[RMDB]
RNA sequence: GGGAACGACUCGAGUAGAGUCGAAAAGAUAUGGAAGUUUGCAAGAUGACGAUCUGGACCCACUUCCGUGUGUCGGAAACGACACAUGAGUGCCAGAUCGUCAUUGAUGACCAAACUUCCUAAGUCAGUAUGCUAAUCUCUUCGGAGAUUAGCAUACAAAAGAAACAACAACAACAAC
Reactivity to 2A3 in 0.01 (KOAc 150mM, MgCl2 10mM, bicine 150mM(pH8.5), 24C), signal-to-noise 2, nucleotides 027 to 126: g040a030u110a100u250g000g020a020a000g020u000u000u000g010c080a230a130g000a010u000g000a000c000g000a010u030c010u010g110g040a210c110c220c030a010c060u300u100c170c030g010u020g000u000g010u000c020g010g030a090a100a120c020g010a000c000a000c000a010u030g020a010g010u070g030c000c010a010g000a000u000c000g000u000c000a000u000u000g010a050u020g000a000c030c000a000a000a000c000u000u000c000c030u020a150a000g030u000c030a000
Reactivity to DMS in 0.01 (KOAc 150mM, MgCl2 10mM, bicine 150mM(pH8.5), 24C), signal-to-noise 3, nucleotides 027 to 126: g000a110u000a300u010g010g000a010a000g000u010u000u030g000c030a090a110g000a010u000g020a010c010g000a000u000c000u000g000g000a300c180c300c050a120c100u000u000c220c050g020u010g010u010g010u000c000g000g000a150a130a230c000g010a010c010a000c000a000u000g000a050g020u000g020c020c000a030g000a000u000c010g000u010c000a000u000u000g000a070u010g000a120c300c010a010a030a010c000u000u010c010c010u000a020a040g030u010c050a100